[RMDB]
RNA sequence: GGGAACGACUCGAGUAGAGUCGAAAAGGUGGCUUUCCUCUAAAUGCUUCCAAGAUAUGAGCAAAUGCUAUAGAAAUUGCAGGGAAGUCCAAAGGGCUGCGCUUCUCCUGUGGCUCAGUCUUAUUUCCAUGAUGUAUGAAUUCGUUCAUACAUCAUGAAAAGAAACAACAACAACAAC
Reactivity to 2A3 in 0.01 (KOAc 150mM, MgCl2 10mM, bicine 150mM(pH8.5), 24C), signal-to-noise 9, nucleotides 027 to 126: g100g030u100g020g000c000u020u020u000c020c010u020c030u050a070a110a070u090g020c020u100u060c050c040a090a050g070a180u200a120u250g040a030g000c020a040a080a110u150g020c040u080a030u040a150g080a050a180a040u120u080g010c040a000g000g000g020a000a010g000u010c010c020a050a110a050g020g000g000c010u020g000c010g000c010u220u100c030u080c020c030u060g030u040g030g000c000u000c010a010g010u000c020u060u120a170u040u050u000c030
Reactivity to DMS in 0.01 (KOAc 150mM, MgCl2 10mM, bicine 150mM(pH8.5), 24C), signal-to-noise 9, nucleotides 027 to 126: g010g020u020g020g010c010u000u010u000c010c000u000c070u010a050a120a120u010g010c030u000u010c140c120a090a120g010a130u020a080u020g010a030g010c020a070a060a090u010g010c050u010a130u020a110g010a080a080a090u010u010g010c090a040g000g000g000a010a010g010u010c030c030a060a100a090g000g000g010c020u000g010c160g000c030u000u010c040u010c060c070u000g010u010g000g000c000u000c010a020g000u010c020u000u010a100u010u000u000c040